[RMDB]
RNA sequence: GGGAACGACUCGAGUAGAGUCGAAAAGAUAUGGACCGGCAGUUGAAAUACACUACCCACCUCGGAAACGAGAGGUGUAUCGUACGCUGCGGUCCUAAGUCAAAACCCUUCGCUUCGGCGAAGGGAAGCACCGUUUAGUGUUCGCACUAAACGGUGCAAAAGAAACAACAACAACAAC
Reactivity to DMS in 0.01 (KOAc 150mM, MgCl2 10mM, bicine 150mM(pH8.5), 24C), signal-to-noise 1, nucleotides 027 to 126: g010a110u020a300u010g000g000a000c010c000g040g050c040a010g010u000u020g000a190a070a000u000a000c010a090c040u010a070c140c080c090a300c140c000u000c000g000g010a080a120a120c020g000a000g020a090g010g010u000g000u000a000u000c060g040u020a190c300g010c040u000g000c010g010g020u000c010c000u000a020a050g020u000c020a080a020a230a090c000c020c000u020u000c000g010c000u000u020c120g030g000c000g000a000a000g000g000g000a040a060
Reactivity to 2A3 in 0.01 (KOAc 150mM, MgCl2 10mM, bicine 150mM(pH8.5), 24C), signal-to-noise 1, nucleotides 027 to 126: g000a010u080a060u220g010g000a000c000c040g280g180c010a000g030u190u230g070a040a070a040u060a050c060a010c000u120a140c090c110c060a030c040c000u020c010g000g050a070a010a050c020g000a000g010a030g000g000u000g010u000a030u060c080g030u030a020c020g000c040u000g000c000g000g020u000c000c000u010a040a010g020u020c010a040a000a030a290c030c020c000u000u000c000g000c000u000u090c260g150g040c000g000a000a030g060g020g000a000a040